[RMDB]
RNA sequence: GGGAACGACUCGAGUAGAGUCGAAAAAGAUCUCCAAUUGUGGCACCACCAGGUGGCCACCACUCUUUGAAGUGAGGAGACUUGCUUUACGUGUUUGUUCAGCCCGAGCUUUCGCUCGCACUGGAACACUGGUGUUUCGUCCUUUCGGACUCAUCAGCCGUAUCAUGGGGUUCGCCCCAUGAUACGGAAAAGAAACAACAACAACAAC
Reactivity to 2A3 in 0.01 (KOAc 150mM, MgCl2 10mM, bicine 150mM(pH8.5), 24C), signal-to-noise 1, nucleotides 027 to 156: a000g040a260u050c000u020c000c000a150a300u160u050g000u000g000g000c000a000c000c000a080c080c050a070g030g030u040g100g050c020c000a030c000c000a000c000u000c080u030u150u300g210a150a000g000u000g070a050g010g000a000g000a000c000u050u050g050c000u080u090u140a080c130g100u080g070u190u070u100g020u050u000c070a050g030c080c000c000g000a020g000c030u270u260u300c180g000c000u000c000g050c020a010c040u050g110g000a010a010c040a000c010u030g000g000u020g110u000u270u170c060g000u000c000c000u100u210u190c120g080g000a010c040u000c120a000u000c000a000g040